[RMDB]
RNA sequence: GGGAACGACUCGAGUAGAGUCGAAAAGAUAUGGAUCCACUCAGGCAGUCCUUAACGUGGAGGAGCUCGGAAACGAGCUCUACCCACCCACGUUAAGGACUGAACUACCUGGUGUGGAUCCUAAGUCGGUGUACUUGUGGUUCGCCACAAGUACACCAAAAGAAACAACAACAACAAC
Reactivity to DMS in 0.01 (KOAc 150mM, MgCl2 10mM, bicine 150mM(pH8.5), 24C), signal-to-noise 1, nucleotides 027 to 126: g010a150u030a300u010g000g010a020u000c000c000a030c000u000c030a040g000g000c010a010g000u000c020c010u020u000a000a000c010g010u000g000g030a170g000g000a030g000c000u000c000g010g000a120a150a220c000g000a000g020c000u000c000u010a030c060c070c170a300c230c010c000a000c000g030u000u030a010a000g020g000a010c000u000g010a000a030c110u000a300c020c000u040g000g010u020g020u000g000g000a000u000c000c000u000a000a170g010u000c060
Annotation:
Chemical mapping of a 177-nucleotide RNA with DMS. For DMS the reverse transcriptase was MarathonRT. For DMS, 788 sequencing reads were counted. The data come from the RNA Mapping Database (RMDB), library TTRINS.